[RMDB]
RNA sequence: GGGAACGACUCGAGUAGAGUCGAAAAAUACAUAAAGCUACACUAUAUACACCCAUAUAAGUAUGUAGUUCGUCAGCUCAGUUACCGCGUCUAUGUCUGUGGGGAAUAAAUCAACACGCUGUGUGGCGAUAGUGGUCCAGUUCGCUGGACCACUAUCAAAAGAAACAACAACAACAAC
Reactivity to 2A3 in 0.01 (KOAc 150mM, MgCl2 10mM, bicine 150mM(pH8.5), 24C), signal-to-noise 4, nucleotides 027 to 126: a000u150a020c100a010u230a070a170a010g000c000u010a010c000a000c010u000a020u000a000u000a130c050a050c030c050c100a060u060a030u040a130a110g030u010a040u040g000u000a000g040u070u140c080g040u050c080a010g000c010u000c060a030g040u040u100a060c000c020g020c000g040u000c040u040a050u070g050u000c050u050g000u050g000g040g000g000a010a150u090a070a110a040u110c050a020a040c020a010c090g050c030u060g030u000g040u070g170g000c040
Reactivity to DMS in 0.01 (KOAc 150mM, MgCl2 10mM, bicine 150mM(pH8.5), 24C), signal-to-noise 3, nucleotides 027 to 126: a070u050a090c100a100u030a070a090a080g000c040u000a050c040a040c010u000a050u000a070u000a040c030a220c160c050c100a110u050a110u060a060a090g000u000a030u000g010u000a040g000u010u030c070g020u000c160a010g060c020u010c160a040g010u000u000a090c030c080g020c050g020u010c030u030a070u020g010u010c030u000g020u000g000g000g000g020a030a080u050a030a070a120u000c050a020a050c090a030c100g000c120u000g010u020g040u000g010g030c110